RNA sequence: GGGAACGACUCGAGUAGAGUCGAAAAGAAGAAGCAGCUCAGAAUCGUUAAGCUUAAAAACAGUAGCCUCUUUGAGCAGAGCAUCAAUUAAAUCUUUUGAAUAAUGAUCGCUACGAAUGUUAAUGUCCUCCACCCGACUAUUCGUAGUCGGGUGGAGAAAAGAAACAACAACAACAAC
Reactivity to 2A3 in 0.01 (KOAc 150mM, MgCl2 10mM, bicine 150mM(pH8.5), 24C), signal-to-noise 1, nucleotides 027 to 126: g030a000a000g030a000a060g050c070a000g000c000u000c000a010g140a020a050u050c140g030u110u260a090a160g000c000u020u000a000a000a000a140a000c080a030g080u110a080g060c000c000u070c000u000u000u150g000a000g060c000a000g020a000g000c000a000u070c000a110a210u000u110a140a250a270u110c130u090u300u160u140g110a090a000u020a080a110u050g000a000u060c000g000c090u030a080c180g000a090a120u150g000u050u060a080a190u100g110u150c000

An RNA of 177 nucleotides, treated with 2A3 and read out base by base.
For 2A3, 331 sequencing reads were counted.
The RNA was probed in 150 mM KOAc, 10 mM MgCl2 and 150 mM bicine (pH 8.5) at 24 C.